[RMDB]
This 177-nucleotide RNA was probed chemically with DMS and 2A3.

RNA sequence: GGGAACGACUCGAGUAGAGUCGAAAAGCUUAGAACGACAAUCACCUGCUGCAAACAGACCCUUUAAACUUGUUUCCAUCUGUUCAUUGGUAAUUAAAAAACCCUGGGGAUCUAACUUUAAGUUGAGUAAUCGUUACGUAUUCGUACGUAACGAUUAAAAAGAAACAACAACAACAAC
Reactivity to DMS in 0.01 (KOAc 150mM, MgCl2 10mM, bicine 150mM(pH8.5), 24C), signal-to-noise 3, nucleotides 027 to 126: g010c080u000u010a090g010a060a070c080g020a130c110a050a060u000c040a050c060c000u000g020c050u000g010c100a070a080a070c090a080g000a110c030c020c030u010u000u000a060a080a130c130u010u010g010u010u010u000c010c030a100u000c050u000g000u010u000c080a080u000u000g000g000u000a040a080u000u010a020a090a100a110a070a080c040c010c030u000g000g010g000g010a050u000c020u000a040a050c030u000u000u000a050a060g010u000u010g010a090g010
Reactivity to 2A3 in 0.01 (KOAc 150mM, MgCl2 10mM, bicine 150mM(pH8.5), 24C), signal-to-noise 2, nucleotides 027 to 126: g010c020u050u020a040g030a100a040c070g070a020c130a040a090u070c040a030c030c040u020g000c010u020g000c030a040a080a000c020a070g090a070c030c010c000u070u080u080a090a080a030c060u110u090g010u030u060u000c020c010a060u040c020u060g030u070u010c000a020u070u000g010g000u080a120a120u150u160a090a080a070a100a110a110c020c030c010u010g010g000g000g020a000u020c020u020a010a020c010u110u140u100a150a070g040u110u070g050a000g020

The DMS profile rests on 2,036 reads. It was measured as part of the RMDB library OK2TST. DMS adducts were read by reverse transcription with MarathonRT.